[RMDB]
RNA sequence: GGGAACGACUCGAGUAGAGUCGAAAAAAUCAUCGGUAGGGGAGCGUCCCAGCGGGGGCGAAGCGGGAGGGGAACCGACCGUGGACCUUCUGGGAGCGAGAAUGCUGGCAUGAGUAGCGAGAGACGAGAUUUAGCUCCCAUUCGUGGGAGCUAAAUCAAAAGAAACAACAACAACAAC
Reactivity to 2A3 in 0.01 (KOAc 150mM, MgCl2 10mM, bicine 150mM(pH8.5), 24C), signal-to-noise 2, nucleotides 027 to 126: a000a000u180c090a010u010c020g100g020u070a020g000g040g010g010a080g020c040g110u060c010c010c000a000g040c050g000g000g000g060g110c040g010a010a000g040c070g030g010g020a180g020g000g000g030a000a000c040c000g000a000c000c000g010u020g000g000a020c000c000u020u030c050u020g030g000g020a020g050c000g000a020g020a040a000u140g040c010u000g040g020c040a040u070g050a090g060u090a000g040c020g040a020g000a000g010a060c080g030a020
Reactivity to DMS in 0.01 (KOAc 150mM, MgCl2 10mM, bicine 150mM(pH8.5), 24C), signal-to-noise 2, nucleotides 027 to 126: a120a040u030c020a010u030c070g040g050u000a090g000g000g000g000a200g030c030g000u030c000c000c020a080g010c130g000g020g000g000g010c220g000a050a220g000c040g000g000g030a300g000g000g020g070a120a010c040c030g000a150c070c000g000u000g000g000a050c050c000u000u000c040u030g010g000g000a190g000c000g000a190g000a070a100u010g010c000u000g000g060c060a050u030g010a060g030u030a060g010c120g000a120g000a010g000a230c100g020a150
Record summary: Conditions: 150 mM KOAc, 10 mM MgCl2 and 150 mM bicine (pH 8.5), 24 C. Chemical mapping of a 177-nucleotide RNA with 2A3 and DMS. The 2A3 profile rests on 876 reads. High DMS reactivity at an A or C suggests that its Watson-Crick edge is free.